RNA sequence: GGGAACGACUCGAGUAGAGUCGAAAAAAAAAAGAUAUGGACUGUGGAGGAGCGUUCCCUAAGACAGGCCAUCGGAAACGAUGGCUCGAGGGAACGAACUACUCUGAGGCAGUCCUAAGUCAAAAAACGAAACCAUAAACUUCGGUUUAUGGUUUCGAAAAGAAACAACAACAACAAC
Reactivity to DMS in 0.01 (KOAc 150mM, MgCl2 10mM, bicine 150mM(pH8.5), 24C), signal-to-noise 1, nucleotides 027 to 126: a000a070a110a180a180a220g040a000u000a090u000g050g000a050c000u000g020u000g040g000a300g030g160a000g000c000g000u000u000c000c000c000u000a110a180g020a040c300a000g000g000c000c000a020u000c000g090g020a020a000a020c000g000a000u000g050g000c020u000c050g000a000g000g040g000a020a040c040g020a020a000c000u020a250c050u000c000u000g000a300g000g020c000a040g020u000c000c000u000a000a120g000u000c000a020a040a090a000a070a280
The record gives the reactivity of an RNA of 177 nucleotides to DMS. It was measured as part of the RMDB library TTRDES. The reactions ran in a buffer of 150 mM KOAc, 10 mM MgCl2 and 150 mM bicine (pH 8.5), at 24 C.